[RMDB]
RNA sequence: GGGAACGACUCGAGUAGAGUCGAAAAGAUAUGGAAAUUUGUGGCUAGCCUCCCAUCGGAAACGAUGGUGCAGGCUUGGACCCACACGGAUUUCCUAAGUCAAAGUGAAUAACUUCGGUUAUUCACAGGCAGAAUUAGAGUUCGCUCUAAUUCUGCCAAAAGAAACAACAACAACAAC
Reactivity to DMS in 0.01 (KOAc 150mM, MgCl2 10mM, bicine 150mM(pH8.5), 24C), signal-to-noise 1, nucleotides 027 to 126: g000a020u000a080u000g000g000a020a030a030u000u000u010g010u010g000g000c030u000a020g010c000c030u040c000c030c000a000u000c010g000g000a010a040a070c000g010a010u000g000g030u010g000c300a010g040g010c000u000u000g040g000a070c300c000c050a020c040a040c300g010g000a020u000u000u000c000c000u010a010a240g000u010c010a130a160a190g000u000g010a010a000u000a030a010c000u010u030c220g040g000u000u000a030u000u010c000a000c000a040